The data come from the RNA Mapping Database (RMDB), library OK2TST. An RNA of 177 nucleotides, treated with 2A3 and DMS and read out base by base.
RNA sequence: GGGAACGACUCGAGUAGAGUCGAAAAGGAACUCUACCGCAGCCUCACAUAUUUCUGCCAACACAAUGUCACUUUUCUUAUACUUCCAAUCUGUUGUCGUGGUUGCCAUGCAACAUGUUCAUCGAGACGGUAGUUUUAUAUUCGUAUAAAACUACCGAAAAGAAACAACAACAACAAC
Reactivity to 2A3 in 0.01 (KOAc 150mM, MgCl2 10mM, bicine 150mM(pH8.5), 24C), signal-to-noise 2, nucleotides 027 to 126: g040g010a090a030c010u000c010u030a010c000c020g030c060a020g000c000c000u030c020a030c020a030u160a130u030u070u030c030u060g040c020c000a080a000c030a020c000a130a050u100g010u060c000a010c050u090u110u050u010c050u070u120a080u040a160c000u080u040c020c000a030a080u010c020u060g020u030u030g030u110c030g020u030g090g000u130u180g100c000c000a050u100g000c000a020a020c000a000u060g060u030u060c110a170u120c080g020a140g030a030
Reactivity to DMS in 0.01 (KOAc 150mM, MgCl2 10mM, bicine 150mM(pH8.5), 24C), signal-to-noise 6, nucleotides 027 to 126: g010g020a100a070c040u000c030u010a070c040c040g010c110a050g010c030c010u010c060a070c080a060u010a110u000u000u000c050u010g010c040c040a060a050c090a060c080a070a060u010g010u000c040a040c040u000u000u000u000c030u010u010a090u010a100c110u010u010c030c040a080a080u010c070u010g010u000u000g000u000c050g030u000g000g010u000u000g020c020c060a060u000g000c010a010a030c040a070u010g020u000u000c090a100u000c050g010a110g000a260
The reactions ran in a buffer of 150 mM KOAc, 10 mM MgCl2 and 150 mM bicine (pH 8.5), at 24 C.